[RMDB]
RNA sequence: GGGAACGACUCGAGUAGAGUCGAAAAGUCAUCGGAUUCUGGAUAACCCUUCAGUACACAAAGAGAGGAGGUGUUCUUUGGGACACACCAUCACCCAAGGAGUACAAGAAGGGUGAUACCACCACUGCUAAGCUGUACAAUUCGUUGUACAGCUUAGAAAAGAAACAACAACAACAAC
Reactivity to 2A3 in 0.01 (KOAc 150mM, MgCl2 10mM, bicine 150mM(pH8.5), 24C), signal-to-noise 9, nucleotides 027 to 126: g100u070c050a080u100c120g070g020a110u230u060c040u140g030g010a050u040a130a130c000c000c000u000u000c010a010g010u000a010c070a000c040a050a160a010g160a020g020a070g040g030a090g020g010u010g020u030u020c040u080u140u190g120g030g020a020c020a000c000a010c050c020a130u100c030a080c010c030c010a030a050g110g030a120g030u010a010c040a090a120g000a010a000g000g000g010u000g000a010u020a020c000c020a020c010c020a050c050u060g000
Reactivity to DMS in 0.01 (KOAc 150mM, MgCl2 10mM, bicine 150mM(pH8.5), 24C), signal-to-noise 7, nucleotides 027 to 126: g000u030c080a080u040c120g010g000a100u020u010c140u000g000g000a100u000a180a030c000c000c000u000u000c010a240g020u000a020c020a120c070a050a090a110g010a100g000a160g000g000a200g010g040u000g000u010u000c000u000u040u040g000g010g010a020c050a000c020a040c010c010a090u010c070a110c050c030c050a110a160g000g000a130g000u010a000c010a090a140g020a010a010g020g000g030u000g020a090u050a080c020c030a050c060c050a120c120u020g000